Description
Chemical mapping of a 177-nucleotide RNA with DMS. The RNA was probed in 150 mM KOAc, 10 mM MgCl2 and 150 mM bicine (pH 8.5) at 24 C.
RNA sequence: GGGAACGACUCGAGUAGAGUCGAAAAGAUAUGGAGUACUCGGGAGGCAUUGGUUCGGAAACGAACCGUUUGCCGACGAUCGAGGUACUCCUAAGUCAAAACACGUUCACCUUCGGGUGAACGUGAACACUUUCUUGACGUUCGCGUCAAGAAAGUGAAAAGAAACAACAACAACAAC
Reactivity to DMS in 0.01 (KOAc 150mM, MgCl2 10mM, bicine 150mM(pH8.5), 24C), signal-to-noise 1, nucleotides 027 to 126: g020a010u000a010u010g010g000a020g010u000a010c000u000c000g000g000g000a010g040g010c000a000u010u000g020g010u020u050c000g010g000a000a000a030c010g000a010a010c000c000g010u000u000u000g040c000c000g020a020c240g000a030u000c000g000a010g010g030u000a010c000u000c000c010u000a000a040g010u000c010a150a120a080a210c020a020c000g000u000u000c000a010c000c010u000u020c250g060g010g010u000g010a010a000c010g010u000g020a040a090
DMS adducts were read by reverse transcription with MarathonRT.